The record gives the reactivity of an RNA of 177 nucleotides to 2A3 and DMS. DMS adducts were read by reverse transcription with MarathonRT. The data come from the RNA Mapping Database (RMDB), library VIROID. The RNA was probed in 150 mM KOAc, 10 mM MgCl2 and 150 mM bicine (pH 8.5) at 24 C. 2A3 adducts were read by reverse transcription with SuperScript II with manganese.

RNA sequence: GGGAACGACUCGAGUAGAGUCGAAAAAGGAGUAAGACCAUAGCGAUGGGGGGAGAUGCUAGGAGUUAGAGGAGACCGAAGCGAGGAGGAAAGCAAAGAAAGCAACGGGGCUAGCCGGUGGGUGUUCGAUAAGAAAAUUGUUCGCAAUUUUCUUAUCAAAAGAAACAACAACAACAAC
Reactivity to 2A3 in 0.01 (KOAc 150mM, MgCl2 10mM, bicine 150mM(pH8.5), 24C), signal-to-noise 1, nucleotides 027 to 126: a000g100g010a090g030u080a110a050g050a020c030c020a050u080a040g090c070g070a080u080g000g000g010g040g000g030a040g010a030u070g030c000u030a030g020g030a040g010u020u000a010g010a020g020g030a030g000a000c000c030g000a030a010g000c010g000a020g040g050a010g000g060a110a000a010g000c030a000a000a180g050a050a120a000g040c000a000a050c030g040g020g010g000c000u030a030g030c000c040g070g030u040g010g000g000u070g100u080u170c030
Reactivity to DMS in 0.01 (KOAc 150mM, MgCl2 10mM, bicine 150mM(pH8.5), 24C), signal-to-noise 2, nucleotides 027 to 126: a080g000g010a110g010u000a070a070g020a130c040c030a060u000a060g020c070g010a120u000g010g000g010g010g000g000a050g030a060u000g020c050u010a090g010g000a060g020u000u000a050g030a070g000g010a130g010a060c100c030g000a070a090g020c110g000a080g030g010a040g010g010a060a050a080g010c070a040a070a080g000a080a050a080g020c050a060a100c100g000g000g000g030c070u000a040g000c030c040g010g010u000g000g000g000u000g010u010u010c080